[RMDB]
RNA sequence: GGGAACGACUCGAGUAGAGUCGAAAAAGCUGGACGGUCCACGCUGACGCAGUUCAGACUGGUGCUUCUGCUCACCGGCCAACAGCUCGUCGGUGCACUGGCCCUCGUCGCCCAUCGGACCACCACCUACCAGGACGUUCUUCGGAACGUCCUGGUAAAAAGAAACAACAACAACAAC
Reactivity to 2A3 in 0.01 (KOAc 150mM, MgCl2 10mM, bicine 150mM(pH8.5), 24C), signal-to-noise 3, nucleotides 027 to 126: a000g090c060u080g000g010a070c070g040g000u000c000c020a080c030g000c090u040g010a020c020g000c150a050g010u050u050c010a020g010a060c020u030g020g030u020g000c050u200u170c060u100g080c060u050c010a000c000c020g020g000c010c020a150a050c060a180g030c020u010c030g000u010c000g020g010u010g060c070a080c070u080g010g030c040c010c020u090c050g050u040c070g050c030c000c020a090u110c070g010g000a020c020c000a020c000c030a020c010c020
Reactivity to DMS in 0.01 (KOAc 150mM, MgCl2 10mM, bicine 150mM(pH8.5), 24C), signal-to-noise 1, nucleotides 027 to 126: a000g040c130u000g000g000a020c230g000g000u000c000c020a300c100g000c100u000g000a070c000g000c080a000g020u000u000c300a130g000a190c050u000g000g000u000g000c170u040u110c030u110g120c000u000c000a000c000c000g000g040c040c000a030a190c300a010g000c080u000c010g030u060c000g010g070u000g000c210a060c070u000g000g000c000c030c140u110c110g000u080c140g000c000c000c000a110u040c120g000g000a260c080c000a100c170c070a010c030c000